[RMDB]
This 207-nucleotide RNA was probed chemically with 2A3. Conditions: 150 mM KOAc, 10 mM MgCl2 and 150 mM bicine (pH 8.5), 24 C. 2A3 adducts were read by reverse transcription with SuperScript II with manganese. Reactivities are given for positions 27 through 156.
RNA sequence: GGGAACGACUCGAGUAGAGUCGAAAAACAGUAGCAGAUCUGGAGAAUCAAUUGGCAUUUUCAUUGCAGGAAAGUUACACAUUCAUCUCUCCUCUGAGUCCAUCGCCUUGUUGUGUGAGACUGAAAGGCAAGUGCUUUCUUGGAUGAGCAAAAGGAGGCUGCGCGGUUAAUUCGUUAACCGCGCAGCAAAAGAAACAACAACAACAAC
Reactivity to 2A3 in 0.01 (KOAc 150mM, MgCl2 10mM, bicine 150mM(pH8.5), 24C), signal-to-noise 1, nucleotides 027 to 156: a000c050a000g070u050a000g000c030a000g010a090u010c020u040g010g020a030g040a070a050u050c020a080a140u120u130g010g000c010a020u060u030u040u000c010a000u000u210g150c010a000g030g020a030a050a000g030u050u130a000c110a000c000a020u030u020c000a070u020c000u000c040u000c050c020u010c080u090g010a030g000u000c110c040a090u050c000g020c020c000u000u060g090u050u050g010u110g010u010g060a040g050a050c060u020g060a080a060a000g100g000c030a100a050g000u000g040c000u060u050u000c060u110u050g040g040a020u050g050a030g030c020a020a070a070a000g160g080a030g100